RNA sequence: GGGAACGACUCGAGUAGAGUCGAAAAUCAAUGUUUGAGUCUCGAAGGAACUUAGACAGAGAUGGUUUGGUCCUGGGACAGUAUUCAAGGCCUUGAGAAGGAAAAGUAAUUUUGUAAAAUAUGGAGAGCAUGAUCCAAUAUUCGUAUUGGAUCAUGCAAAAGAAACAACAACAACAAC
Reactivity to DMS in 0.01 (KOAc 150mM, MgCl2 10mM, bicine 150mM(pH8.5), 24C), signal-to-noise 2, nucleotides 027 to 126: u010c010a060a200u010g010u000u000u000g010a020g020u000c150u000c010g020a230a130g010g010a060a030c010u000u000a000g010a010c000a000g000a300g000a040u000g030g000u000u000u000g000g010u000c020c010u010g020g000g000a000c060a050g020u000a090u000u010c060a060a100g030g000c030c040u000u010g000a070g000a080a060g000g010a040a060a060a060g000u010a030a090u000u000u000u000g000u000a060a060a060a100u000a060u010g010g000a100g010a180
Reactivity to 2A3 in 0.01 (KOAc 150mM, MgCl2 10mM, bicine 150mM(pH8.5), 24C), signal-to-noise 2, nucleotides 027 to 126: u000c000a000a060u000g030u000u020u040g010a010g030u020c020u010c240g060a140a110g140g020a010a000c030u030u000a030g010a010c010a020g020a010g000a070u020g070g000u020u080u230g010g000u000c000c010u000g010g010g010a030c040a060g100u100a100u020u060c060a040a040g060g010c010c030u090u100g110a080g060a040a050g000g030a060a100a000a090g050u030a050a060u060u170u190u070g040u050a080a080a080a060u210a140u190g040g020a150g000a010
This 177-nucleotide RNA was probed chemically with DMS and 2A3. For 2A3, 1,110 sequencing reads were counted. Source: RMDB library OK2TRN, as collected in RNAgym. For DMS, 1,811 sequencing reads were counted.